[RMDB]
Chemical mapping of a 207-nucleotide RNA with DMS and 2A3. The DMS profile rests on 4,095 reads. Conditions: 150 mM KOAc, 10 mM MgCl2 and 150 mM bicine (pH 8.5), 24 C. DMS adducts were read by reverse transcription with MarathonRT. For 2A3 the reverse transcriptase was SuperScript II with manganese.
RNA sequence: GGGAACGACUCGAGUAGAGUCGAAAAGUACAUAGUAGGUGCGCUUACUGUUUGCAGAAUGAACAUGGGACAGUUUGGGGACUGUCACCCAGCUCAGGGAGCACUGAUGGGGAAGCAUCUCCUGUAUGUCCCAGGGCUCAGUGCUGUAGUGUCCUGAAUGAUACUGAUCGUUCGCGAUCAGUAUCAUAAAAGAAACAACAACAACAAC
Reactivity to DMS in 0.01 (KOAc 150mM, MgCl2 10mM, bicine 150mM(pH8.5), 24C), signal-to-noise 2, nucleotides 027 to 156: g020u000a070c020a080u010a040g030u010a030g030g040u000g030c120g050c040u000u000a040c040u000g030u000u000u000g000c020a130g000a160a130u010g010a010a030c020a100u000g030g020g000a040c010a020g000u000u010u000g030g020g020g010a120c090u000g000u010c040a190c020c000c000a080g000c100u000c020a120g000g030g000a160g030c190a160c040u010g010a060u000g010g030g010g000a130a150g010c060a070u000c010u000c000c000u000g020u020a050u000g000u000c000c000c000a060g010g030g040c000u010c020a080g030u010g000c030u010g040u000a080g020u010g000u000c010c020u000g000a250
Reactivity to 2A3 in 0.01 (KOAc 150mM, MgCl2 10mM, bicine 150mM(pH8.5), 24C), signal-to-noise 4, nucleotides 027 to 156: g020u020a020c020a050u090a030g090u020a030g070g000u020g040c110g020c040u060u060a040c020u040g100u190u090u080g030c040a030g050a130a070u050g010a050a020c020a050u060g020g000g000a000c000a010g020u100u190u140g000g010g020g020a020c070u040g140u270c050a140c020c000c000a070g040c020u010c030a020g040g100g080a150g090c080a060c160u040g020a070u050g000g000g000g030a080a000g040c020a070u000c010u020c010c000u050g040u090a110u020g010u000c000c000c000a010g020g030g000c010u000c030a030g020u060g140c030u040g040u080a060g050u040g040u050c020c000u030g060a110